The record gives the reactivity of an RNA of 207 nucleotides to 2A3 and DMS. It was measured as part of the RMDB library OK3TST.
RNA sequence: GGGAACGACUCGAGUAGAGUCGAAAAGGGUUUGAGCCAUCGCCCGAAUAAGAUGGAUGAUACAAGUCGCCAUUGUACGCGACGUAGUACGUACUCAUUAGUGCGAAAGCACGGUUAGUCCGACUCGGCAGGGACGAUCUUCUGUCAAUACUUAGAACGUACUAUUAUCGUUCGCGAUAAUAGUACGAAAAGAAACAACAACAACAAC
Reactivity to 2A3 in 0.01 (KOAc 150mM, MgCl2 10mM, bicine 150mM(pH8.5), 24C), signal-to-noise 6, nucleotides 027 to 156: g080g010g010u050u080u180g100a030g010c010c010a020u020c010g020c010c000c010g040a060a130u220a060a010g000a000u020g020g030a020u100g050a030u090a130c130a170a010g010u010c010g010c010c040a120u090u240g070u150a100c050g000c010g000a010c010g000u010a010g000u010a040c030g000u010a010c010u010c030a040u030u110a080g000u000g000c020g020a090a010a030g000c010a000c000g020g000u010u010a010g000u000c040c000g020a040c040u010c060g000g000c020a020g010g010g020a020c050g020a110u040c050u120u010c010u030g040u020c010a050a100u090a160c090u100u100a080g030a130a010
Reactivity to DMS in 0.01 (KOAc 150mM, MgCl2 10mM, bicine 150mM(pH8.5), 24C), signal-to-noise 3, nucleotides 027 to 156: g010g000g030u000u000u010g030a100g020c040c050a090u000c060g000c010c010c020g040a080a130u000a050a130g010a050u000g030g020a090u000g010a100u000a060c080a090a190g020u010c000g030c010c040a180u000u010g000u010a090c120g010c000g010a060c040g000u000a080g020u000a040c040g020u000a030c020u000c040a110u000u010a100g010u000g000c000g020a110a130a210g020c000a040c010g000g000u010u000a130g010u000c020c030g010a080c040u000c060g030g020c020a100g030g000g000a060c060g000a070u000c050u000u010c050u020g000u010c000a050a090u010a100c060u010u010a120g010a080a290
The 2A3 profile rests on 5,978 reads.